Record summary: This 207-nucleotide RNA was probed chemically with 2A3 and DMS. It was measured as part of the RMDB library M2RFPK.
[RMDB]
RNA sequence: GGGAACGACUCGAGUAGAGUCGAAAAAGUUAGGUUCGCUAUGGUGCAACUCUUUAAGGCAAUAACGAACUAAUUCUAAGCAAGUAAUGGAGAAAUGCCAGGGUCACUAUUUAGCCAUAAUAGUGCUGUAAGUGACUUAGAUUCGUCUAAGUCACAAGAAUGUUACGGACUUCGGUCCGUAACAUUCAAAAGAAACAACAACAACAAC
Reactivity to 2A3 in 0.01 (KOAc 150mM, MgCl2 10mM, bicine 150mM(pH8.5), 24C), signal-to-noise 3, nucleotides 027 to 156: a010g050u020u030a060g030g090u020u000c020g000c040u040a020u050g110g140u040g080c040a090a200c090u100c070u220u220u230a080a060g040g000c020a020a090u060a100a020c030g010a000a020c010u030a010a000u070u060c070u120a050a000g100c050a080a010g060u180a140a060u120g050g030a110g080a100a120a050u090g010c000c010a030g100g030g000u140c000a000c010u010a040u010u010u040a030g010c000c020a000u040a130a010u020a040g000u020g040c040u050g070u080a140a030g000u000g000a000c000u000u000a010g000a010u030u020c100g010u000c080u000a000a010g000u000c000a000c000a000a010
Reactivity to DMS in 0.01 (KOAc 150mM, MgCl2 10mM, bicine 150mM(pH8.5), 24C), signal-to-noise 2, nucleotides 027 to 156: a090g020u000u000a100g000g020u020u000c020g050c010u000a010u010g020g000u000g010c080a100a070c140u000c140u000u020u000a080a110g020g000c010a110a080u000a020a010c040g000a000a040c010u000a040a040u000u000c040u000a080a110g000c040a060a140g000u020a090a100u000g010g010a150g000a080a100a100u000g020c010c030a130g030g020g010u000c060a060c010u000a090u000u000u000a080g020c160c170a050u000a060a070u000a090g020u000g040c040u000g050u000a130a090g010u000g000a040c000u010u010a000g020a020u000u000c300g050u020c000u000a010a000g000u000c000a000c000a030a080
Reactivities are given for positions 27 through 156.